[RMDB]
The record gives the reactivity of an RNA of 207 nucleotides to DMS and 2A3. The DMS profile rests on 4,920 reads. High 2A3 reactivity points to a flexible backbone, as in loops and unpaired stretches. The 2A3 profile rests on 1,227 reads. It was measured as part of the RMDB library ARCHII. Conditions: 150 mM KOAc, 10 mM MgCl2 and 150 mM bicine (pH 8.5), 24 C.
RNA sequence: GGGAACGACUCGAGUAGAGUCGAAAAGGCUGUACCAGAUGGUUGGGCUUGGUGGGCUAAUUUCUGACUUGCCCUAUCCAAGCUUAGAGUUGGAUCAUGUGGCCCAAUUGAAGAAAUGGACUACUUGAUUCGUAAAGUGGGGCGGAAUGCGUGAGGCGGAGAAGAUUUAGUUCGCUAAAUCUUCUCCAAAAGAAACAACAACAACAAC
Reactivity to DMS in 0.01 (KOAc 150mM, MgCl2 10mM, bicine 150mM(pH8.5), 24C), signal-to-noise 2, nucleotides 027 to 156: g020g010c010u000g020u000a100c030c030a070g010a100u000g020g010u000u000g010g020g000c030u010u000g030g030u010g000g020g000c030u020a040a070u000u010u010c110u000g010a120c100u000u000g000c030c010c020u010a070u000c020c010a040a050g010c040u010u000a030g020a170g010u000u000g020g010a020u000c010a030u000g000u010g010g000c010c000c000a030a200u000u000g000a180a160g020a100a070a140u000g000g010a030c000u000a010c030u000u000g000a030u000u000c010g000u010a030a070a140g030u000g010g020g000g030c060g000g000a070a090u000g010c040g030u010g000a070g040g040c190
Reactivity to 2A3 in 0.01 (KOAc 150mM, MgCl2 10mM, bicine 150mM(pH8.5), 24C), signal-to-noise 2, nucleotides 027 to 156: g010g000c030u030g010u030a080c010c050a020g020a130u130g040g000u090u060g010g000g010c000u000u000g010g010u000g000g010g000c010u070a110a070u070u270u130c120u120g130a090c060u080u110g000c000c000c000u020a040u000c010c020a010a010g000c010u020u050a010g000a010g050u120u150g000g010a000u010c000a000u010g020u030g020g000c000c010c010a080a150u030u070g050a140a110g040a070a100a000u040g010g000a020c000u000a010c000u020u000g000a020u030u020c010g010u070a070a040a020g060u080g020g000g000g030c000g020g010a090a050u080g030c010g030u040g020a030g000g070c040